Conditions: 150 mM KOAc, 10 mM MgCl2 and 150 mM bicine (pH 8.5), 24 C. An RNA of 177 nucleotides, treated with 2A3 and DMS and read out base by base. It was measured as part of the RMDB library OK2TST. For DMS, 6,191 sequencing reads were counted. DMS (dimethyl sulfate) methylates the pairing face of unpaired adenines and cytosines. DMS adducts were read by reverse transcription with MarathonRT.
RNA sequence: GGGAACGACUCGAGUAGAGUCGAAAAUGGGAACAGGACCAUUGCACAUACCCCUUUCUGAGCGCGUCAACAUUGCCGCUGGAACCGGAACGGCAUUAUUGCAAGGCGCUGUCCAAAUCCUUCCAUAGACCGUUUUAAAUUUCGAUUUAAAACGGUCAAAAGAAACAACAACAACAAC
Reactivity to 2A3 in 0.01 (KOAc 150mM, MgCl2 10mM, bicine 150mM(pH8.5), 24C), signal-to-noise 2, nucleotides 027 to 126: u070g010g000g020a070a030c030a050g030g040a060c010c010a140u010u060g020c060a110c000a060u130a090c000c000c000c020u020u070u030c030u030g040a050g010c090g020c020g110u100c010a050a080c020a250u060u200g010c000c000g000c020u020g040g060a060a060c050c030g040g010a040a050c010g030g000c010a000u050u130a020u030u080g030c030a010a050g050g020c030g020c080u010g010u000c000c000a030a040a080u060c010c010u100u000c010c000a010u090a060
Reactivity to DMS in 0.01 (KOAc 150mM, MgCl2 10mM, bicine 150mM(pH8.5), 24C), signal-to-noise 6, nucleotides 027 to 126: u000g000g000g000a080a130c100a080g010g020a090c010c010a050u000u000g010c070a050c190a100u000a160c110c180c010c070u000u010u010c060u010g010a060g020c030g010c030g000u010c040a040a080c150a050u010u010g010c020c010g020c020u000g020g010a080a120c140c080g010g000a050a070c060g010g010c060a030u010u000a040u000u010g020c100a050a060g010g010c020g010c000u000g010u000c010c020a030a070a100u000c060c030u000u000c030c060a110u010a180